Notes: Conditions: 150 mM KOAc, 10 mM MgCl2 and 150 mM bicine (pH 8.5), 24 C. Structure probing data (DMS and 2A3) for a 177-nucleotide construct. DMS adducts were read by reverse transcription with MarathonRT. Reactivities are rounded to 0.1 and cut off at 0 and 3. The data come from the RNA Mapping Database (RMDB), libraries RFM100 and RFMREP.
RNA sequence: GGGAACGACUCGAGUAGAGUCGAAAAAUCGGGAAAAGAUGCUUGUGCCGUUUUCGUCAGCCACUCGCAGAGCAGAGCAAAUUAAGCUAACAGCCGAGCAGCAAACGCUGUUCUCCGUACGGCAGAAGGAAGGAACUGAAUUCGUUCAGUUCCUUCCAAAAGAAACAACAACAACAAC
Reactivity to DMS in 0.01 (KOAc 150mM, MgCl2 10mM, bicine 150mM(pH8.5), 24C), signal-to-noise 4, nucleotides 027 to 126: a060u040c050g000g010g010a060a080a090a110g000a050u010g000c040u000u010g010u020g010c020c040g010u010u000u020u000c050g000u000c050a070g020c030c060a060c040u020c050g000c080a050g000a100g000c020a070g000a040g020c050a060a040a120u040u010a070a130g010c020u000a090a070c090a090g020c030c050g010a110g010c030a020g010c060a090a080a150c190g010c030u000g000u000u000c020u000c020c020g020u010a080c070g000g000c060a070g020a120a100
Reactivity to 2A3 in 0.01 (KOAc 150mM, MgCl2 10mM, bicine 150mM(pH8.5), 24C), signal-to-noise 5, nucleotides 027 to 126: a000u100c060g000g020g010a060a070a010a030g120a060u090g020c030u060u060g040u060g070c030c020g030u020u030u030u040c030g030u020c010a010g030c030c000a020c030u050c030g020c030a010g020a020g040c000a000g020a010g000c020a090a060a120u250u140a210a060g000c020u020a050a070c020a030g000c020c020g000a000g000c000a000g010c010a140a120a020c090g000c010u000g000u040u000c040u000c030c000g030u060a030c030g010g000c030a060g070a070a020